Overview
Structure probing data (2A3) for a 207-nucleotide construct. For 2A3 the reverse transcriptase was SuperScript II with manganese. Conditions: 150 mM KOAc, 10 mM MgCl2 and 150 mM bicine (pH 8.5), 24 C.

RNA sequence: GGGAACGACUCGAGUAGAGUCGAAAAUGGAUGAAUUGUGCACCUUGAAAAGUUCUUCCAUGGUCACCUGAGGCAUCUGCGUCAUGAUUAGGCUCCGGAUGACUAAUAAUGGACGUACUUGUUCUGAUUUGAGGACUUCUUCAUGGUCACAUGUUCACUAGCUACUGCUGUUCGCAGCAGUAGCUAGAAAAGAAACAACAACAACAAC
Reactivity to 2A3 in 0.01 (KOAc 150mM, MgCl2 10mM, bicine 150mM(pH8.5), 24C), signal-to-noise 2, nucleotides 027 to 156: u110g050g000a000u010g010a040a090u020u000g000u000g010c170a030c040c000u000u000g010a010a020a000a000g030u020u000c000u080u000c050c060a120u100g040g000u010c020a000c030c000u010g000a000g040g080c020a030u040c010u060g050c090g250u190c080a140u120g040a030u040u170a040g000g110c010u030c030c030g010g090a230u000g000a010c000u040a000a080u080a130a050u070g000g010a000c000g090u210a080c080u050u180g050u050u040c010u010g140a220u080u200u180g010a030g000g000a000c000u000u040c000u050u010c000a000u010g000g000u010c000a000c000a000u100g040u000u000c000a000